[RMDB]
RNA sequence: GGGAACGACUCGAGUAGAGUCGAAAAGGGGUCGCUCAGGAUGAGGUUAAGCUUUUGACGCUCUGAAGCCUCCACGGAGCGAUAAGCUUAACUACCCACCAUCGCAGGCGACGGAGGCACCCAAACAUCCCGUAACAGUUCGCUGUUACGGGAUGAACGCACAAUGUCAGUUCGCUGACAUUGUGCGAAAAGAAACAACAACAACAAC
Reactivity to 2A3 in 0.01 (KOAc 150mM, MgCl2 10mM, bicine 150mM(pH8.5), 24C), signal-to-noise 2, nucleotides 027 to 156: g000g020g020g000u020c000g000c030u150c040a040g140g000a030u020g000a000g000g020u000u000a000a000g000c050u080u130u210u270g100a070c070g000c000u020c000u020g040a110a030g000c000c000u010c010c000a000c020g000g010a000g000c000g030a080u080a130a010g030c010u000u000a000a000c000u040a070c090c070c010a050c020c010a000u040c000g020c010a000g000g010c000g030a000c000g010g000a000g000g000c000a020c020c000c000a000a000a000c000a010u000c000c000c000g000u000a000a000c000a000g090u130u170c260g090c190u010g000u010u000a020c000g000g000g000a000u000g000a000a040
This 207-nucleotide RNA was probed chemically with 2A3. 2A3 adducts were read by reverse transcription with SuperScript II with manganese. The 2A3 profile rests on 1,494 reads. Conditions: 150 mM KOAc, 10 mM MgCl2 and 150 mM bicine (pH 8.5), 24 C. Source: RMDB library RNAMAK, as collected in RNAgym.